[RMDB]
RNA sequence: GGGAACGACUCGAGUAGAGUCGAAAAGACGCUGGGCUUCGGGAUCGAAGACAGCGAGGGUGGAGAACUUCUGAAGCGCGCACGGAAGACCACCUACCCACCGCUGUUGUAGUCGAAGCCUGUGCUGAAGCGCGCACGGCAACCGAAAGGUGCGAAACCCUUGUUAAACGUUCGCGUUUAACAAGGGAAAAGAAACAACAACAACAAC
Reactivity to 2A3 in 0.01 (KOAc 150mM, MgCl2 10mM, bicine 150mM(pH8.5), 24C), signal-to-noise 2, nucleotides 027 to 156: g150a010c030g000c030u040g000g000g010c000u020u000c000g040g010g020a130u220c000g000a050a030g000a000c000a000g000c000g000a010g000g010g000u030g010g020a110g010a300a300c000u010u030c010u020g040a180a030g000c000g000c000g020c020a010c020g020g000a000a010g010a050c000c010a000c000c020u050a060c030c080c050a040c010c000g000c000u010g000u080u140g020u110a020g040u060c000g000a000a000g000c010c000u000g000u010g000c010u050g020a100a010g020c020g000c000g000c000a000c000g000g000c010a000a010c010c000g000a130a040a030g000g000u000g000c020g020a100a100a110